This 177-nucleotide RNA was probed chemically with DMS. The data come from the RNA Mapping Database (RMDB), library TTRINS. The RNA was probed in 150 mM KOAc, 10 mM MgCl2 and 150 mM bicine (pH 8.5) at 24 C. For DMS, 2,079 sequencing reads were counted.
RNA sequence: GGGAACGACUCGAGUAGAGUCGAAAAGAUAUGGAAAAGUUAUAUGGAACCAAACUCCGAUAAGAACGUGUGUCGGAAACGACACGUUCUUUUGACGGAGCUGGUUCCAUAUAACUUUUCCUAAGUCGACCUUUAGUAUCUUCGGAUACUAAAGGUCAAAAGAAACAACAACAACAAC
Reactivity to DMS in 0.01 (KOAc 150mM, MgCl2 10mM, bicine 150mM(pH8.5), 24C), signal-to-noise 2, nucleotides 027 to 126: g000a080u010a300u010g020g010a030a000a010a000g000u000u000a000u000a020u000g000g000a010a000c020c000a030a140a200c000u000c000c000g020a160u000a040a010g000a020a000c010g020u000g020u010g020u000c000g020g000a110a080a200c020g020a030c010a000c000g000u010u000c000u000u000u000u000g010a190c100g010g000a030g040c160u000g000g010u010u000c000c000a000u010a000u000a000a000c000u000u000u000u020c000c000u000a030a060g020u020c120